[RMDB]
RNA sequence: GGGAACGACUCGAGUAGAGUCGAAAAGGUCUAACCUUCGGGUUAGACCAAAAUAAGAGCUAAGCGUAGCUCAGCUGCAAACGCAAAAAGCAGCAAAGCGAAAAACCCGCCAGUUCGCUGGCGGGAACACAUUUUAACUCUUCGGAGUUAAAAUGUGAAAAGAAACAACAACAACAAC
Reactivity to 2A3 in 0.01 (KOAc 150mM, MgCl2 10mM, bicine 150mM(pH8.5), 24C), signal-to-noise 1, nucleotides 027 to 126: g000g010u010c000u000a020a000c000c000u020u090c300g030g000g000u000u000a030g000a000c000c000a000a000a000a000u040a010a040g010a000g000c020u030a100a040g110c030g240u060a010g030c010u020c040a040g000c010u000g000c020a070a120a130c150g030c160a010a120a010a040a040g000c000a000g010c000a060a030a000g050c030g080a160a010a000a050a100c000c000c000g000c020c000a010g020u070u100c190g010c080u010g000g010c000g000g000g000a010a000
Reactivity to DMS in 0.01 (KOAc 150mM, MgCl2 10mM, bicine 150mM(pH8.5), 24C), signal-to-noise 1, nucleotides 027 to 126: g020g000u000c000u000a010a010c020c010u020u030c220g070g060g010u000u000a000g000a000c010c000a030a000a010a120u000a140a040g010a040g010c020u020a040a140g020c140g000u000a050g010c000u010c030a110g000c000u000g030c000a020a070a110c250g010c250a030a060a100a140a120g010c000a020g030c000a040a040a040g010c060g000a030a060a090a110a090c030c000c010g020c000c000a060g010u000u000c130g030c020u000g000g000c000g000g000g000a010a010